Source: RMDB library OK1LIB, as collected in RNAgym.
Chemical mapping of a 177-nucleotide RNA with 2A3 and DMS.
The reactions ran in a buffer of 150 mM KOAc, 10 mM MgCl2 and 150 mM bicine (pH 8.5), at 24 C.
The 2A3 profile rests on 3,078 reads.
For DMS, 4,443 sequencing reads were counted.
For 2A3 the reverse transcriptase was SuperScript II with manganese.

RNA sequence: GGGAACGACUCGAGUAGAGUCGAAAACGAUGCAGUCCCCCAGGUCCACGCGCGAGAGCGGGUACUCGGUCAGGUUGGUGGUGAAGGUGGUGGAUAUGGCGUCGGAGGAGAAUCGGAAGGAGCCGCCUCAUCUGCCCUAUUUCGAUAGGGCAGAUGAAAAAGAAACAACAACAACAAC
Reactivity to 2A3 in 0.01 (KOAc 150mM, MgCl2 10mM, bicine 150mM(pH8.5), 24C), signal-to-noise 4, nucleotides 027 to 126: c020g030a010u150g040c050a010g040u060c010c010c000c000c020a010g030g050u020c000c020a080c080g060c040g000c040g020a080g010a000g090c030g000g030g020u060a080c040u040c080g070g030u020c020a070g070g060u080u130g050g030u090g020g020u100g090a100a060g050g060u100g010g070u070g020g040a070u050a120u190g040g000c010g030u030c020g040g010a030g020g020a070g030a050a090u040c040g050g020a000a050g030g020a020g010c000c000g010c030c000
Reactivity to DMS in 0.01 (KOAc 150mM, MgCl2 10mM, bicine 150mM(pH8.5), 24C), signal-to-noise 2, nucleotides 027 to 126: c040g020a050u010g010c080a070g010u010c000c010c020c050c020a070g000g000u010c040c040a040c060g000c050g020c030g000a100g010a120g020c040g000g000g010u000a040c020u000c040g000g000u000c040a100g000g000u010u020g010g040u000g010g000u000g000a130a090g020g000u010g010g020u040g000g000a080u020a100u030g010g010c020g020u000c030g010g000a060g010g000a070g010a070a080u010c080g020g020a080a040g000g010a090g000c020c050g040c070c080